Notes:
An RNA of 207 nucleotides, treated with 2A3 and read out base by base. Reactivities are given for positions 27 through 156. Source: RMDB library M2RFPK, as collected in RNAgym.
RNA sequence: GGGAACGACUCGAGUAGAGUCGAAAAACGCGUCGGCUACGGACGACGCGAAGAUUUGCAUAUAGUGUAGUAUGCAACUAAAAAUAAAGAAAUACACGUCAAGAACAGUCCGGUACGCCGGACUGAAAAAAGGACUCUUUCUUCGGAAAGAGUCCAAGGAUAAUGUCUGCUUCGGCAGACAUUAUCCAAAAGAAACAACAACAACAAC
Reactivity to 2A3 in 0.01 (KOAc 150mM, MgCl2 10mM, bicine 150mM(pH8.5), 24C), signal-to-noise 1, nucleotides 027 to 156: a000c010g000c000g030u000c000g030g000c020u110a060c180g060g130a010c000g010a000c000g000c010g000a020a010g060a070u020u030u000g000c000a000u000a000u010a070g000u000g000u000a000g010u000a000u000g000c000a030a030c040u170a030a000a050a120a000u190a040a110a030g080a020a130a000u050a000c010a000c000g210u200c100a070a030g010a140a100c000a000g010u000c000c000g000g020u050a050c290g060c020c000g010g000a000c000u000g000a000a000a000a000a000a000g030g000a000c020u000c000u010u000u010c020u020u060c130g090g000a000a000a000g000a000g000u000c000c000a000a000